RNA sequence: GGGAACGACUCGAGUAGAGUCGAAAACCCCUCGGUAAUGGCGAAUGGGACCCAGAACUCUCUCUAGAUUCCGAUAGAGAAUCGAGAGAAAACUGGCUCUCCCUUAGCCAUCCGAGGUGGACGUACGCUUCUAGUAUAUCUUCGGAUAUACUAGAAGAAAAGAAACAACAACAACAAC
Reactivity to 2A3 in 0.01 (KOAc 150mM, MgCl2 10mM, bicine 150mM(pH8.5), 24C), signal-to-noise 4, nucleotides 027 to 126: c000c000c000c000u000c000g020g020u080a080a040u010g000g000c010g020a050a030u040g000g000g000a020c030c000c010a020g020a090a070c020u000c000u000c000u020c020u070a100g000a020u000u000c010c030g210a240u190a190g170a010g000a020a000u010c010g000a000g000a000g000a030a010a010a000c010u000g000g000c010u010c000u000c000c000c000u000u020a000g010c000c000a010u010c000c000g000a000g000g010u180g040g010a060c080g040u240a040c100g010
Reactivity to DMS in 0.01 (KOAc 150mM, MgCl2 10mM, bicine 150mM(pH8.5), 24C), signal-to-noise 6, nucleotides 027 to 126: c020c000c010c010u000c000g000g000u000a070a020u000g010g000c010g000a150a070u000g010g010g010a020c270c010c000a010g000a110a300c260u000c010u010c000u000c010u010a160g010a010u000u000c000c000g000a170u010a130g000a200g000a010a000u010c000g000a010g010a000g010a010a000a100a160c010u000g010g000c010u000c080u000c000c000c000u000u010a300g000c000c000a000u000c000c000g000a010g000g020u010g020g010a060c150g000u000a120c230g000